Chemical mapping of a 177-nucleotide RNA with 2A3 and DMS.
DMS adducts were read by reverse transcription with MarathonRT.
RNA sequence: GGGAACGACUCGAGUAGAGUCGAAAAUACAUCGAAUAAUUUGAAAAUCAACAACAUAGGAAGAUCUUCACUCGAAAGUAGUAUUACGCGCAAAUGAGGAGUAAUUAUUGUUCGGUAUCAAAUGGAGAUCGAGUAUCGGUUUCGACCGAUACUCGAUAAAAGAAACAACAACAACAAC
Reactivity to 2A3 in 0.01 (KOAc 150mM, MgCl2 10mM, bicine 150mM(pH8.5), 24C), signal-to-noise 3, nucleotides 027 to 126: u150a000c000a010u000c000g040a010a040u070a080a080u080u000u030g100a110a050a000a030u050c020a020a110c000a060a010c030a130u180a120g070g010a020a080g020a040u000c060u040u040c050a020c070u030c080g050a060a090a030g000u000a000g010u000a120u110u100a030c160g090c020g060c140a070a050a150u120g010a060g050g020a010g020u020a020a090u090u190a040u000u050g040u000u020c000g010g010u010a040u140c130a010a020a050u120g130g000a130g000
Reactivity to DMS in 0.01 (KOAc 150mM, MgCl2 10mM, bicine 150mM(pH8.5), 24C), signal-to-noise 2, nucleotides 027 to 126: u110a180c080a090u000c020g020a040a090u000a120a050u010u030u010g000a040a030a090a040u010c040a080a050c120a010a120c280a070u020a100g000g000a240a100g000a080u030c030u000u000c060a030c150u070c030g070a070a060a060g000u050a000g040u000a070u020u020a000c020g020c040g000c080a060a120a150u000g000a030g060g000a110g000u020a070a040u000u000a020u040u010g000u000u000c000g000g000u000a030u000c150a000a120a010u020g000g000a060g000